Source: RMDB library TTRDEL, as collected in RNAgym. The record gives the reactivity of an RNA of 177 nucleotides to 2A3 and DMS. The DMS profile rests on 5,073 reads. DMS adducts were read by reverse transcription with MarathonRT. For 2A3, 7,153 sequencing reads were counted. The reactions ran in a buffer of 150 mM KOAc, 10 mM MgCl2 and 150 mM bicine (pH 8.5), at 24 C.
[RMDB]
RNA sequence: GGGAACGACUCGAGUAGAGUCGAAAAGAUAUGGAGAGCUUUGAUCUGGCUACACGAAGAACUCGGAAACGAGGGAGUGUAACCAGGGAGCUCUCCUAAGUCAAAUCCUAAUGUUCGCAUUAGGAAAUCUAUAAUCUAAGUUCGCUUAGAUUAUAGAAAAAGAAACAACAACAACAAC
Reactivity to 2A3 in 0.01 (KOAc 150mM, MgCl2 10mM, bicine 150mM(pH8.5), 24C), signal-to-noise 3, nucleotides 027 to 126: g020a030u070a060u170g010g000a010g000a000g000c020u300u240u140g080a100u140c010u010g000g000c010u010a000c000a000c010g260a300a110g030a080a020c000u000c000g020g040a080a050a030c010g000a010g030g000g000a050g000u000g000u000a010a010c010c000a000g020g000g000a000g010c010u000c010u000c000c000u000a010a000g000u010c010a010a030a150u020c000c000u010a020a010u040g030u060u110c300g000c180a000u000u000a000g020g000a040a040a020
Reactivity to DMS in 0.01 (KOAc 150mM, MgCl2 10mM, bicine 150mM(pH8.5), 24C), signal-to-noise 4, nucleotides 027 to 126: g000a030u000a300u010g010g000a010g010a010g020c010u010u000u020g010a040u010c000u010g000g000c020u000a010c010a000c010g000a110a140g000a140a200c010u010c000g000g000a110a080a200c000g000a010g000g000g000a080g010u000g000u000a000a020c000c000a010g000g000g010a010g010c030u000c000u000c000c000u000a000a040g010u010c030a140a130a180u000c000c000u000a010a010u000g010u000u010c250g010c010a010u000u010a010g000g000a020a070a050